[RMDB]
RNA sequence: GGGAACGACUCGAGUAGAGUCGAAAAGAUAUGGAGACCAGGACCAGGCACGGACUAUUCGGAAACGAACGAAUCCGUGAACUACCUGAGAAUGGUCUCCUAAGUCAAAGUGCUGUUCGCAGCACAACCUUGAACCCUAGUUCGCUAGGGUUCAAGGAAAAGAAACAACAACAACAAC
Reactivity to 2A3 in 0.01 (KOAc 150mM, MgCl2 10mM, bicine 150mM(pH8.5), 24C), signal-to-noise 2, nucleotides 027 to 126: g020a050u070a040u150g000g010a010g000a020c010c000a000g030g040a020c010c010a010g000g000c000a000c010g030g030a030c100u100a070u040u000c000g000g070a080a110a090c050g000a080a020c030g060a100a300u020c000c000g010u010g010a010a010c030u140a020c030c000u030g020a010g000a010a030u000g000g000u000c000u030c000c000u000a040a000g010u000c020a080a030a050g000u000g000c000u010g020u120u140c300g000c090a000g000c000a000c000a030a010
Reactivity to DMS in 0.01 (KOAc 150mM, MgCl2 10mM, bicine 150mM(pH8.5), 24C), signal-to-noise 2, nucleotides 027 to 126: g000a070u040a300u010g010g010a020g020a010c010c000a000g030g020a300c120c000a000g000g000c000a000c010g000g010a020c090u010a220u000u000c000g000g020a130a110a170c000g000a020a010c150g010a140a060u000c000c000g040u000g000a010a050c070u000a300c000c010u000g000a030g020a300a110u000g000g010u000c000u000c000c000u000a000a040g000u010c060a040a120a120g010u000g020c000u020g000u010u000c200g000c000a020g000c000a000c010a080a040

Chemical mapping of a 177-nucleotide RNA with 2A3 and DMS. For DMS the reverse transcriptase was MarathonRT. For DMS, 1,414 sequencing reads were counted. The reactions ran in a buffer of 150 mM KOAc, 10 mM MgCl2 and 150 mM bicine (pH 8.5), at 24 C.